[RMDB]
RNA sequence: GGGAACGACUCGAGUAGAGUCGAAAAGAAAGAAAGAAAGAGGAACAUUCUAGGAGUUGUAGUCUUUCAAACAGAGCUUUGCAAGUACAUACCUGUAUUGGAACACUACAGCUCCAGGAACUUUCAAUCAUCGCGACCAUUUCGAUGGUCGCGAUGAAAAAGAAACAACAACAACAAC
Reactivity to 2A3 in 0.01 (KOAc 150mM, MgCl2 10mM, bicine 150mM(pH8.5), 24C), signal-to-noise 2, nucleotides 027 to 126: g080a000a010a010g000a010a070a010g090a000a060a000g140a060g210g070a130a220c040a040u030u020c000u130a180g010g000a000g020u000u000g000u000a000g000u000c020u030u000u000c000a000a000a000c010a030g070a060g080c090u150u060u240g090c140a300a070g160u150a160c040a060u130a000c000c000u020g000u010a300u040u020g000g010a000a000c010a000c000u000a000c000a000g000c000u000c000c000a020g000g000a020a020c010u000u010u020c030a060a040
Conditions: 150 mM KOAc, 10 mM MgCl2 and 150 mM bicine (pH 8.5), 24 C. Structure probing data (2A3) for a 177-nucleotide construct.